This 207-nucleotide RNA was probed chemically with 2A3. It was measured as part of the RMDB library OK3TST. Reactivities are given for positions 27 through 156. Conditions: 150 mM KOAc, 10 mM MgCl2 and 150 mM bicine (pH 8.5), 24 C.
RNA sequence: GGGAACGACUCGAGUAGAGUCGAAAAUGUACAAACCUUCUUUUUUUGAGACAGGGUGUCAGUCUGUCACCCAGCCUGGAGUACAGAGGUGUGAUCUCAGCUCACUGCAACCUCAACCUCCCAGGAUCAGAUGAUUCUCCUCCCACCUCAUCCUCCAAGCUAGCAUUACUUUCGAGUAAUGCUAGCUAAAAGAAACAACAACAACAAC
Reactivity to 2A3 in 0.01 (KOAc 150mM, MgCl2 10mM, bicine 150mM(pH8.5), 24C), signal-to-noise 1, nucleotides 027 to 156: u180g000u050a030c050a110a130a120c040c020u120u110c100u120u140u080u020u010u100u150g050a040g050a020c060a060g000g050g010u000g030u030c040a110g090u020c050u080g040u000c020a000c060c000c000a000g070c000c000u020g000g020a040g010u060a040c050a070g030a000g000g000u000g000u020g070a040u000c080u070c220a030g000c130u060c040a050c040u070g000c010a050a080c020c000u010c020a000a080c000c000u040c040c090c000a010g000g000a030u050c000a000g070a080u030g040a050u080u000c080u090c030c000u040c010c030c010a000c000c010u010c000a100u050c030c030u000c010c020a000